Source information
The record gives the reactivity of an RNA of 177 nucleotides to 2A3 and DMS. In probing experiments dimethyl sulfate is read out at A N1 and C N3, which are open when not base-paired. For DMS the reverse transcriptase was MarathonRT. The data come from the RNA Mapping Database (RMDB), libraries RFM100 and RFMREP. Conditions: 150 mM KOAc, 10 mM MgCl2 and 150 mM bicine (pH 8.5), 24 C.

RNA sequence: GGGAACGACUCGAGUAGAGUCGAAAAGUGCGAUUUAAAGAGGUUAAUGACCGAAGACAGUGUGGAGGUUAGCUUAGAAGCAGCUAUCCUUUAAAGAGUGCGUAACAGCUCACUCACCGAGGUUAUUAAGCAUAGGGAGGUUCGCCUCCCUAUGCUUAAAAGAAACAACAACAACAAC
Reactivity to 2A3 in 0.01 (KOAc 150mM, MgCl2 10mM, bicine 150mM(pH8.5), 24C), signal-to-noise 1, nucleotides 027 to 126: g130u080g060c070g070a080u060u100u300a230a170a030g140a070g000g110u040u050a040a020u120g020a020c010c010g000a000a030g010a000c040a000g010u000g000u010g080g020a000g000g000u000u030a000g010c000u020u020a020g020a080a020g040c020a000g020c000u000a000u030c000c000u000u000u010a010a000a000g010a000g010u010g000c010g000u000a010a010c000a060g000c000u000c000a010c000u000c010a000c000c000g000a010g000g020u020u010a000u030u040
Reactivity to DMS in 0.01 (KOAc 150mM, MgCl2 10mM, bicine 150mM(pH8.5), 24C), signal-to-noise 2, nucleotides 027 to 126: g000u000g030c000g000a120u000u030u010a030a160a030g040a140g000g020u000u000a070a050u000g000a070c010c000g000a090a060g000a080c300a130g000u040g000u020g000g000a020g040g000u000u000a020g000c010u000u000a170g000a190a270g080c270a070g000c020u000a000u010c000c000u000u000u000a110a000a030g000a100g040u000g000c020g000u000a110a090c160a200g000c000u000c070a010c040u000c000a030c050c030g000a110g000g010u000u000a050u000u000